[RMDB]
RNA sequence: GGGAACGACUCGAGUAGAGUCGAAAACAAAUGUGAAAUAGGGUCUGCUACAUAAGACAGAAACAGACUUCUUUUGUGUUAAACUGCUGAAAUUGCAGAGUUAUUUGUUACAGCAACUAAUGUUACCCUAAUUAACACAAACCUAACAAGAAAUGUCGCCUCGUUACUGAUUCGUCAGUAACGAGGCAAAAGAAACAACAACAACAAC
Reactivity to 2A3 in 0.01 (KOAc 150mM, MgCl2 10mM, bicine 150mM(pH8.5), 24C), signal-to-noise 2, nucleotides 027 to 156: c000a010a050a040u100g060u090g140a040a100a090u070a070g000g000g010u010c050u030g020c030u120a030c030a070u060a160a030g030a010c030a070g000a020a060a010c020a020g050a000c000u180u200c050u070u160u140u020g010u000g010u000u010a000a100a000c010u020g000c010u000g110a050a110a060u140u130g010c010a010g010a010g030u050u030a020u030u030u100g050u060u140a050c020a020g000c020a040a010c010u120a070a100u060g010u060u040a030c010c000c010u030a100a130u090u010a000a000c000a000c000a020a050a030c120c010u170a140a060c060a090a040g250a100a090a060u110g010u010c030
This 207-nucleotide RNA was probed chemically with 2A3. 2A3 adducts were read by reverse transcription with SuperScript II with manganese. The RNA was probed in 150 mM KOAc, 10 mM MgCl2 and 150 mM bicine (pH 8.5) at 24 C. The 2A3 profile rests on 670 reads.